RNA sequence: GGGAACGACUCGAGUAGAGUCGAAAAUGAUACUUGGUAGGCAGAGCCUUAGCUUGUCCUAAUUACAUUUUGGUAUCAUCAUCUUUCAGCUUUGAAGUUGAGGCCCUGCUCCCUUGGACAUAGAGUCCACAAGAGUUAUGUUCGCAUAACUCUUGUGAAAAGAAACAACAACAACAAC
Reactivity to DMS in 0.01 (KOAc 150mM, MgCl2 10mM, bicine 150mM(pH8.5), 24C), signal-to-noise 9, nucleotides 027 to 126: u000g010a070u010a050c020u000u000g010g020u000a080g010g010c020a030g010a050g010c000c070u000u000a030g010c010u000u000g010u010c030c030u000a060a100u010u010a110c190a150u000u000u010u000g010g000u000a040u010c050a040u000c070a080u000c060u000u000u000c050a080g010c110u000u000u000g010a040a030g010u000u000g000a020g000g000c010c020c010u000g000c010u000c210c010c020u000u000g010g000a060c020a100u000a120g000a200g010u000c020
Reactivity to 2A3 in 0.01 (KOAc 150mM, MgCl2 10mM, bicine 150mM(pH8.5), 24C), signal-to-noise 4, nucleotides 027 to 126: u060g010a010u040a110c020u050u070g050g020u080a080g040g020c010a010g010a010g030c000c000u020u020a010g010c000u030u060g040u080c000c020u090a160a140u190u160a090c090a170u090u120u090u180g080g010u110a040u090c020a020u020c010a040u010c060u020u140u070c050a040g030c060u100u140u220g070a040a010g000u010u010g000a000g000g000c000c000c000u000g000c000u050c010c000c000u010u040g020g000a000c010a010u140a070g140a020g110u010c020